[RMDB]
RNA sequence: GGGAACGACUCGAGUAGAGUCGAAAAGAUAUGGAGUGUGUGUCCCGACAACAGCGAAUAGAAAACGUCUUGUCGGAAACGACAAGACGUUUUCUAUUCGACAUGUCGGAACACCACUCCUAAGUCACAAGUAGGAUUACUUCGGUAAUCCUACUUGAAAAGAAACAACAACAACAAC
Reactivity to DMS in 0.01 (KOAc 150mM, MgCl2 10mM, bicine 150mM(pH8.5), 24C), signal-to-noise 3, nucleotides 027 to 126: g000a040u000a300u020g000g000a040g000u000g010u020g030u000g010u000c020c000c000g010a000c010a030a120c300a240g000c010g000a010a000u000a010g030a020a010a010a010c000g020u000c010u000u000g010u000c000g010g010a080a060a170c010g010a030c010a020a010g000a000c010g000u000u000u000u000c010u000a000u000u000c000g010a030c120a120u000g010u000c000g010g010a020a000c000a000c000c000a010c000u000c000c000u000a000a060g010u010c030a300
Structure probing data (DMS) for a 177-nucleotide construct. The reactions ran in a buffer of 150 mM KOAc, 10 mM MgCl2 and 150 mM bicine (pH 8.5), at 24 C. Values cover nucleotides 27 to 126. It was measured as part of the RMDB library TTRINS.